[RMDB]
RNA sequence: GGGAACGACUCGAGUAGAGUCGAAAACCAGCGAGAGGCGUGGAGAGAGGGCCGCGGUGCUCUGGAGUAGAGGCUCUGCCUUCGAAACACCAUCGAUCGUCCCUUCUUCUUUACCUUCUUCUGGCUCUUCCGAUGAGACGCGACCGGUGGCAUCACCCUACCCAAAGAUGUUCGCAUCUUUGGGUAGAAAAGAAACAACAACAACAAC
Reactivity to 2A3 in 0.01 (KOAc 150mM, MgCl2 10mM, bicine 150mM(pH8.5), 24C), signal-to-noise 4, nucleotides 027 to 156: c000c000a000g010c120g030a030g010a000g010g040c160g040u020g010g000a010g000a000g000a000g000g010g000c020c010g030c010g000g020u010g000c000u000c000u000g010g000a000g000u000a010g010a000g000g010c020u070c210u300g050c040c000u180u170c010g020a010a010a000c010a010c140c030a010u000c010g050a300u040c010g000u000c000c000c000u060u040c020u060u000c000u000u000u010a010c000c000u000u020c000u000u010c010u010g000g010c020u020c020u100u040c020c020g060a110u100g030a040g030a050c050g010c050g110a070c050c030g030g010u030g020g040c040a070u140c020a080c010c000
Reactivity to DMS in 0.01 (KOAc 150mM, MgCl2 10mM, bicine 150mM(pH8.5), 24C), signal-to-noise 2, nucleotides 027 to 156: c010c000a060g050c130g000a030g010a030g000g010c100g020u010g020g010a090g020a190g010a070g060g030g030c040c030g040c030g000g050u000g000c030u000c070u000g020g060a170g030u010a160g020a110g010g030c040u010c180u010g040c040c000u000u000c030g010a300a200a300c020a030c090c000a030u000c020g050a050u020c020g000u010c030c000c010u000u000c010u000u000c010u000u000u000a020c020c000u000u000c000u000u000c030u010g000g030c010u010c090u000u000c010c050g000a250u020g000a170g010a070c010g000c020g030a080c040c040g060g000u010g020g000c050a120u000c060a070c020c030

Structure probing data (2A3 and DMS) for a 207-nucleotide construct. DMS adducts were read by reverse transcription with MarathonRT. For 2A3 the reverse transcriptase was SuperScript II with manganese. Reactivities are given for positions 27 through 156. The DMS profile rests on 2,882 reads.